Chemical mapping of a 177-nucleotide RNA with DMS and 2A3. For DMS, 1,438 sequencing reads were counted. The data come from the RNA Mapping Database (RMDB), library TTRDEL.
RNA sequence: GGGAACGACUCGAGUAGAGUCGAAAAGAUAUGGACCAUCUGGUACCCUCGAUGAAAUCGGAAACGAUGGAGAGGACCAGAGUGGUCCUAAGUCAAAGACGAAGUUCAGUUCGCUGAACUUCGUCAAGCCUAGUGACAAGUUCGCUUGUCACUAGGCAAAAGAAACAACAACAACAAC
Reactivity to DMS in 0.01 (KOAc 150mM, MgCl2 10mM, bicine 150mM(pH8.5), 24C), signal-to-noise 2, nucleotides 027 to 126: g000a030u000a300u000g000g000a000c000c000a050u000c010u020g020g000u000a140c250c000c000u000c000g020a110u000g000a050a140a030u000c000g000g000a150a070a180c000g010a010u010g030g000a050g000a010g010g000a030c000c000a000g000a050g060u010g000g000u000c000c000u000a010a090g000u000c000a080a130a090g000a020c000g000a020a020g020u000u010c000a000g000u010u000c300g020c000u010g030a000a000c000u000u000c000g040u000c000a020a070
Reactivity to 2A3 in 0.01 (KOAc 150mM, MgCl2 10mM, bicine 150mM(pH8.5), 24C), signal-to-noise 2, nucleotides 027 to 126: g020a050u090a050u180g010g000a000c000c000a010u010c000u020g090g090u280a300c060c010c010u020c040g300a300u090g020a010a050a000u010c010g010g020a100a050a020c000g000a000u030g000g010a000g000a020g030g000a010c000c000a000g000a000g020u040g000g010u000c000c000u000a030a010g040u020c040a120a040a020g000a000c020g000a000a000g010u000u000c010a010g000u040u130c220g030c150u000g000a000a000c000u020u000c000g010u000c000a000a000
The 2A3 profile rests on 2,956 reads. Values cover nucleotides 27 to 126. The RNA was probed in 150 mM KOAc, 10 mM MgCl2 and 150 mM bicine (pH 8.5) at 24 C.